Structure probing data (2A3 and DMS) for a 177-nucleotide construct. Values are in units of 0.01, from 0 to 300, in steps of 10. For DMS, 1,566 sequencing reads were counted. DMS adducts were read by reverse transcription with MarathonRT.
RNA sequence: GGGAACGACUCGAGUAGAGUCGAAAAUCUAAAUGCACAUCCUCGAGCGAAAAAGGAGAAUGAAACAUGAGUAAUACAACAUUACAUGCAACAACAAUUUAUGCUGUAAGACAUAAUGGGAAAGCAGGAACGCAUCUGAAUUCGUUCAGAUGCGUUCAAAAGAAACAACAACAACAAC
Reactivity to 2A3 in 0.01 (KOAc 150mM, MgCl2 10mM, bicine 150mM(pH8.5), 24C), signal-to-noise 2, nucleotides 027 to 126: u010c000u020a000a060a100u170g000c050a050c010a090u000c000c020u050c080g050a090g040c070g030a170a000a040a000a030g070g010a040g030a030a040u100g050a070a080a050c040a040u080g030a030g100u080a040a060u100a080c060a150a010c020a070u120u000a040c010a030u120g000c050a060a070c000a020a020c020a080a060u060u130u060a060u050g010c010u050g080u120a030a000g040a040c000a050u100a050a020u070g000g000g030a110a010a020g040c030a020g140
Reactivity to DMS in 0.01 (KOAc 150mM, MgCl2 10mM, bicine 150mM(pH8.5), 24C), signal-to-noise 3, nucleotides 027 to 126: u000c030u020a050a120a120u000g030c110a080c070a060u000c010c010u010c040g000a090g040c080g000a030a060a100a140a070g000g000a060g000a040a050u000g020a150a120a060c070a020u000g000a080g020u000a080a040u010a050c090a070a050c110a060u000u000a030c040a100u010g000c080a030a110c140a050a070c090a030a080u000u000u000a040u020g010c020u000g000u000a040a070g010a080c060a010u020a030a020u000g000g000g000a050a060a100g000c100a050g000